RNA sequence: GGGAACGACUCGAGUAGAGUCGAAAAUCUGGUCGGCAUGACGGUAGUAGCUACUGCUAUCCGGGAAGCCAGCGCGGUAAAUAGCCGCCGUGAUCGGCUCUCCUUUCGCCAAAGCCUCACGCAGCCGCACUCCAGUGCCUUUCGAGGCACUGGAGUGAAAAGAAACAACAACAACAAC
Reactivity to DMS in 0.01 (KOAc 150mM, MgCl2 10mM, bicine 150mM(pH8.5), 24C), signal-to-noise 2, nucleotides 027 to 126: u000c000u000g000g010u000c070g000g100c040a040u000g000a210c000g020g010u000a050g040u020a070g010c160u000a100c140u000g010c000u000a020u020c090c000g010g000g050a160a130g000c040c060a080g030c150g040c030g010g030u020a050a120a110u020a210g020c050c010g000c000c020g000u030g000a140u020c050g010g010c050u010c100u080c010c000u020u000u030c050g020c090c040a060a160a150g020c030c000u000c110a070c140g010c000a110g000c010c000g020
Reactivity to 2A3 in 0.01 (KOAc 150mM, MgCl2 10mM, bicine 150mM(pH8.5), 24C), signal-to-noise 5, nucleotides 027 to 126: u040c020u070g070g020u060c000g010g010c130a160u090g080a110c030g010g000u030a040g020u000a020g030c100u150a090c060u100g020c000u020a020u080c030c010g030g000g010a030a010g040c000c000a040g020c030g000c000g000g020u070a160a210a200u150a200g020c010c030g000c010c030g030u020g050a170u140c090g020g000c010u000c000u030c000c020u010u120u070c050g020c010c010a040a160a040g010c000c010u040c020a030c030g020c020a020g010c000c010g020